[RMDB]
Structure probing data (2A3) for a 177-nucleotide construct. The reactions ran in a buffer of 150 mM KOAc, 10 mM MgCl2 and 150 mM bicine (pH 8.5), at 24 C. Source: RMDB library OK1LIB, as collected in RNAgym. Values are in units of 0.01, from 0 to 300, in steps of 10.
RNA sequence: GGGAACGACUCGAGUAGAGUCGAAAACAAAUACUGGUUCUCCACCUUGCCCGAUGACAUGAAGCUGGCCGACCUCGUCGAAAUCACCAAGUUGCGCUGGCGUAUCGAGCGCGAUUUCCAGAACCUCCAGACAGUCCGCCUUCGGGCGGACUGUCUGAAAAGAAACAACAACAACAAC
Reactivity to 2A3 in 0.01 (KOAc 150mM, MgCl2 10mM, bicine 150mM(pH8.5), 24C), signal-to-noise 1, nucleotides 027 to 126: c000a060a000a000u150a150c000u040g040g210u040u010c040u220c000c000a160c000c110u030u100g000c000c000c100g260a300u190g000a000c000a100u230g100a000a000g000c000u010g000g000c000c000g030a000c000c040u120c060g050u000c070g100a000a000a250u110c000a000c010c020a070a000g170u220u050g030c060g000c110u030g000g100c180g000u080a290u020c180g000a030g070c130g010c000g020a150u000u060u000c000c000a000g070a080a040c000c000u000c000